RNA sequence: GGGAACGACUCGAGUAGAGUCGAAAAGAUAUGGACUAUCACAGAGCACGAAGAACUCGGAAACGAGGGAGUGUCCUGUGAGUAGUCCUAAGUCAAACCGUUUAGUUCCUUCGGGAACUAAACGGAACUUCACCAAUAACUUCGGUUAUUGGUGAAGAAAAGAAACAACAACAACAAC
Reactivity to 2A3 in 0.01 (KOAc 150mM, MgCl2 10mM, bicine 150mM(pH8.5), 24C), signal-to-noise 2, nucleotides 027 to 126: g030a010u060a040u190g000g000a000c000u000a010u040c000a000c000a010g030a010g030c000a000c030g180a300a120g020a090a010c010u000c020g040g000a070a090a040c020g000a010g030g030g020a050g020u000g010u110c010c010u000g000u020g030a010g000u020a000g000u000c000c000u010a060a010g040u030c050a060a060a120c000c000g000u010u010u000a000g000u010u010c010c000u030u050c300g040g000g000a010a000c000u000a010a000a000c000g000g000a010a000
Reactivity to DMS in 0.01 (KOAc 150mM, MgCl2 10mM, bicine 150mM(pH8.5), 24C), signal-to-noise 3, nucleotides 027 to 126: g000a070u000a300u010g030g010a010c010u000a040u000c010a020c000a000g000a070g020c000a000c000g000a130a160g000a080a190c000u000c000g000g010a110a110a200c000g000a020g000g000g000a070g030u000g010u010c010c000u000g020u000g000a020g010u000a000g020u000c000c000u000a020a070g000u010c030a110a130a150c010c000g000u000u000u000a000g000u000u000c000c000u000u000c200g030g000g010a000a000c010u000a000a010a000c000g000g000a010a050